[RMDB]
RNA sequence: GGGAACGACUCGAGUAGAGUCGAAAAGUUUUUCAUUUAGACCAUAAACACAUUAGCAACAUGAAUUUAUCAUCAACGUAAUAUGGCUAAUACAGUUGAUCCGGAAUUUAGUGAAGCAUAUAUAAUACAUGAGGUUUUCAAUUACCAGUCAUUAUUGCGUUUAGCGUAGAUUCGUCUACGCUAAACGAAAAGAAACAACAACAACAAC
Reactivity to DMS in 0.01 (KOAc 150mM, MgCl2 10mM, bicine 150mM(pH8.5), 24C), signal-to-noise 2, nucleotides 027 to 156: g000u000u020u000u010u000c030a130u000u010u010a070g000a180c010c020a060u000a060a090a160c060a100c080a300u000u000a080g040c080a070a210c080a040u020g000a040a080u000u000u000a090u020c040a130u010c020a030a080c070g030u000a060a170u020a060u000g010g000c050u030a070a080u000a040c100a100g000u000u020g000a030u000c000c010g030g030a020a080u010u000u000a030g030u010g000a040a180g020c060a080u000a080u000a090u000a060a080u010a040c050a070u000g000a130g010g020u000u000u000u010c080a000a120u000u000a050c030c020a080g050u000c030a110u000u000a100u000u000g000
Reactivity to 2A3 in 0.01 (KOAc 150mM, MgCl2 10mM, bicine 150mM(pH8.5), 24C), signal-to-noise 3, nucleotides 027 to 156: g010u020u030u000u050u190c070a080u090u070u100a070g040a120c020c010a020u100a060a140a010c070a000c010a090u130u120a070g020c090a040a090c020a040u040g060a100a030u130u140u100a120u170c020a010u010c020a030a050c030g030u030a060a040u050a100u040g060g000c030u020a020a020u070a130c050a040g040u060u050g050a010u010c040c000g040g040a060a080u040u060u030a080g010u040g040a060a010g000c020a000u060a010u040a010u020a100a110u070a070c050a050u070g020a130g030g020u020u020u060u120c030a070a030u060u000a040c010c010a010g140u110c010a050u030u110a050u050u180g000

Annotation: Structure probing data (DMS and 2A3) for a 207-nucleotide construct. Reactivities are rounded to 0.1 and cut off at 0 and 3. Reactivities are given for positions 27 through 156. The 2A3 profile rests on 1,523 reads. Conditions: 150 mM KOAc, 10 mM MgCl2 and 150 mM bicine (pH 8.5), 24 C.